Chemical mapping of a 207-nucleotide RNA with 2A3.
For 2A3, 751 sequencing reads were counted.
Reactivities are given for positions 27 through 156.
The data come from the RNA Mapping Database (RMDB), library M2RFPK.
RNA sequence: GGGAACGACUCGAGUAGAGUCGAAAACGGCUAAAAAGCAAACUUGACCACCAAGGAUAAAAGAGAUCUUAUCCAAGGAUGCAAAAGAUAAUCUCACUUUUGACACCCACUGAUCUCGAACUUAAAGAAAACCGAGACUACUUCGGUAGUCUCGGAACCGUCUUAUGACCUUCGGGUCAUAAGACGGAAAAGAAACAACAACAACAAC
Reactivity to 2A3 in 0.01 (KOAc 150mM, MgCl2 10mM, bicine 150mM(pH8.5), 24C), signal-to-noise 2, nucleotides 027 to 156: c020g000g000c030u020a080a000a000a040a000g020c000a080a040a030c050u100u090g060a130c000c030a000c040c050a030a020g020g020a070u050a090a090a030a030g010a000g000a010u010c000u070u080a040u080c090c050a070a110g040g000a020u040g000c020a000a030a000a000g020a080u140a130a160u090c070u050c040a030c030u050u000u010u030g140a160c020a020c000c010c030a030c130u080g000a020u020c000u000c000g000a070a010c030u140u250a070a040a130g090a050a070a030a020c000c000g000a000g010a000c000u010a000c000u000u010c070g070g000u010a000g000u000c000u000c000g000g000a000a000
The RNA was probed in 150 mM KOAc, 10 mM MgCl2 and 150 mM bicine (pH 8.5) at 24 C.